[RMDB]
RNA sequence: GGGAACGACUCGAGUAGAGUCGAAAAGAUUUGAGUUUGAGCACAUAUGUUGGUACCCGAAAGAUGGUGAACUAUGCCUGAGUAGGGUGAAGCCAGGGGAAACUCUGGUGGAAGCUCGUAGCGAUUCGUUGGUCCAAUGAUUCGUCAUUGGACCAACAAAAGAAACAACAACAACAAC
Reactivity to 2A3 in 0.01 (KOAc 150mM, MgCl2 10mM, bicine 150mM(pH8.5), 24C), signal-to-noise 1, nucleotides 027 to 126: g110a080u160u200u270g050a040g060u020u060u060g020a070g020c050a050c010a050u190a050u170g070u040u040g020g000u010a030c000c000c020g000a000a030a030g070a080u150g000g000u040g030a090a040c030u060a270u300g010c000c000u030g000a060g000u050a000g050g000g000u010g000a000a000g000c000c000a000g000g000g000g080a020a020a020c010u000c000u000g000g000u000g000g000a150a020g010c000u040c020g000u020a020g000c000g080a090u080u060c060
Reactivity to DMS in 0.01 (KOAc 150mM, MgCl2 10mM, bicine 150mM(pH8.5), 24C), signal-to-noise 2, nucleotides 027 to 126: g000a070u000u020u000g010a090g000u020u000u000g000a040g030c040a140c090a090u020a060u030g010u020u000g000g000u010a030c000c000c020g020a060a110a120g040a120u030g000g000u000g000a090a080c240u060a160u050g000c000c000u030g000a210g000u000a290g030g010g000u000g000a160a180g030c020c000a010g000g010g000g030a190a080a090c000u000c010u010g000g020u000g000g030a080a050g060c030u010c010g040u020a020g000c040g020a050u020u000c090